Overview: Chemical mapping of a 207-nucleotide RNA with 2A3 and DMS. The 2A3 profile rests on 932 reads. 2A3 adducts were read by reverse transcription with SuperScript II with manganese. The DMS profile rests on 3,891 reads. The RNA was probed in 150 mM KOAc, 10 mM MgCl2 and 150 mM bicine (pH 8.5) at 24 C.
[RMDB]
RNA sequence: GGGAACGACUCGAGUAGAGUCGAAAAGAAUGGUUCUUACUUUUCAGCUAGUAUCUAAAAGGUGAUUCACUUAGGAGCAGCAUAGAGGAGAAACUUGUAUUUCACCUAUCAAGUUUCUGAUUUAAAAGUGAAAUUUCAGCCAGGCACGGUGGCACAAUGAUGGCAGUAAUUUCGAUUACUGCCAUCAAAAAGAAACAACAACAACAAC
Reactivity to 2A3 in 0.01 (KOAc 150mM, MgCl2 10mM, bicine 150mM(pH8.5), 24C), signal-to-noise 1, nucleotides 027 to 156: g080a030a110u120g000g000u040u040c030u060u050a140c030u110u070u010u080c030a010g000c000u110a000g020u070a110u130c050u120a050a080a050a040g000g000u060g000a090u060u130c040a000c070u090u090a010g090g000a040g050c040a010g000c020a040u060a070g040a030g080g050a050g000a000a020a000c000u010u000g020u030a030u010u090u030c050a070c020c000u020a030u040c000a000a010g000u000u000u000c000u020g050a030u000u100u190a000a210a040a050g000u020g020a060a100a000u090u110u050c030a030g000c040c010a010g080g000c000a010c020g070g010u050g000g060c080a000c030a030a070
Reactivity to DMS in 0.01 (KOAc 150mM, MgCl2 10mM, bicine 150mM(pH8.5), 24C), signal-to-noise 2, nucleotides 027 to 156: g020a050a140u000g020g010u010u000c010u010u000a120c030u010u000u000u000c040a080g020c000u000a130g010u010a070u000c020u000a050a050a100a110g010g030u000g000a130u000u010c040a070c080u000u030a150g030g020a080g030c010a060g000c030a130u000a090g010a110g000g000a090g020a020a020a010c000u000u000g020u010a180u000u000u000c050a020c070c060u010a230u000c010a010a050g020u000u000u000c050u010g020a170u000u010u000a060a050a050a100g020u010g010a030a060a120u000u010u010c030a080g000c010c040a060g000g070c040a060c060g020g020u010g010g020c040a040c050a080a180